[RMDB]
RNA sequence: GGGAACGACUCGAGUAGAGUCGAAAAGAUAUGGAUUCUCGACGUAAGCACGACGAUCUCGGAAACGAGGGAGUGUAUCGUCGAGGAAUCCUAAGUCAAAAGAUUACAACGUUCGCGUUGUAAUCAACUCUCCUCUGGAGUUCGCUCCAGAGGAGAGAAAAGAAACAACAACAACAAC
Reactivity to 2A3 in 0.01 (KOAc 150mM, MgCl2 10mM, bicine 150mM(pH8.5), 24C), signal-to-noise 2, nucleotides 027 to 126: g010a020u100a050u160g000g000a000u050u000c010u030c000g000a030c050g050u230a300a240g000c000a010c020g300a170c000g030a160u010c000u000c000g000g000a060a070a050c010g020a000g020g060g000a030g000u020g020u020a080u300c000g020u000c000g010a030g020g020a000a000u020c000c000u020a100a040g030u040c060a040a010a060a260g000a000u000u000a010c000a030a020c010g100u100u060c240g000c010g140u040u000g000u010a000a000u000c000a000a010
Reactivity to DMS in 0.01 (KOAc 150mM, MgCl2 10mM, bicine 150mM(pH8.5), 24C), signal-to-noise 2, nucleotides 027 to 126: g020a050u020a300u000g000g000a000u000u000c000u000c010g010a000c000g000u020a100a270g010c000a030c010g000a150c180g020a070u000c010u010c000g010g000a070a040a130c010g010a020g010g020g020a100g050u010g000u000a110u030c000g010u000c010g020a030g020g010a010a000u000c000c000u000a010a150g000u000c040a080a070a140a080g020a060u000u000a000c000a000a020c000g020u000u020c210g050c000g000u010u000g020u000a000a000u000c010a110a140